RNA sequence: GGGAACGACUCGAGUAGAGUCGAAAAGAUAUGGAGGUAUGAUGACCGGUCGCACUGGAGUCGAUGUUCGGAAACGAACAUACGACGUUGAAAGUGAACUACGACCGGUCAUCAUACCUCCUAAGUCCUAUUAAUGUAAGUUCGCUUACAUUAAUAGAAAAGAAACAACAACAACAAC
Reactivity to DMS in 0.01 (KOAc 150mM, MgCl2 10mM, bicine 150mM(pH8.5), 24C), signal-to-noise 4, nucleotides 027 to 126: g010a090u000a300u010g010g020a030g000g010u000a000u000g000a010u010g020a020c010c000g000g020u000c000g050c010a020c020u010g000g010a090g000u000c010g020a050u000g000u000u000c000g000g000a100a140a270c010g000a010a000c000a010u000a100c000g020a030c010g020u010u020g000a140a160a040g000u000g000a080a080c250u010a300c030g010a010c020c000g000g000u000c000a010u000c000a000u000a000c010c000u000c000c000u000a000a070g010u010c040